[RMDB]
RNA sequence: GGGAACGACUCGAGUAGAGUCGAAAAGCGUCCUGCGAAGUCUGUAGAGCCGACGGCACAUCAAUCGCGUUCUUGACAAAGAGGGCAAACGCGCUGUUUUCAAAGGGAUCAACUGGCGCAGCGACGAUAACGGUGUGUAUCUAACGGAGAAUGGUACCAUCUUAUACUGCUUCGGCAGUAUAAGAUGAAAAGAAACAACAACAACAAC
Reactivity to DMS in 0.01 (KOAc 150mM, MgCl2 10mM, bicine 150mM(pH8.5), 24C), signal-to-noise 2, nucleotides 027 to 156: g020c050g000u000c020c010u000g020c020g000a100a070g000u000c040u010g020u000a110g000a160g000c030c020g040a070c040g020g020c030a050c060a100u000c040a140a050u010c030g000c020g020u000u000c010u000u000g010a200c170a070a090a090g000a100g000g000g030c050a030a050a040c060g010c040g030c050u000g030u010u000u000u020c050a060a090a110g030g030g000a120u010c030a050a060c010u000g000g030c030g010c000a060g020c010g000a040c000g010a080u000a010a060c020g010g010u010g030u000g020u000a050u000c030u000a130a140c080g010g000a080g020a070a100u000g000g010u020a070c030
Reactivity to 2A3 in 0.01 (KOAc 150mM, MgCl2 10mM, bicine 150mM(pH8.5), 24C), signal-to-noise 7, nucleotides 027 to 156: g050c020g020u030c010c000u020g040c030g020a070a030g040u020c060u090g100u210a060g020a040g110c020c030g040a060c020g010g050c030a030c030a130u170c090a090a100u100c050g010c010g080u040u030c040u060u090g030a070c070a070a130a010g060a060g030g060g030c040a070a040a010c050g000c000g000c030u020g040u020u060u040u050c120a140a120a030g070g010g020a070u070c040a030a060c040u080g080g000c030g000c010a010g010c030g050a070c020g030a060u030a100a030c050g030g030u050g000u020g010u040a050u040c030u070a070a060c040g100g060a050g040a110a110u120g000g010u030a030c050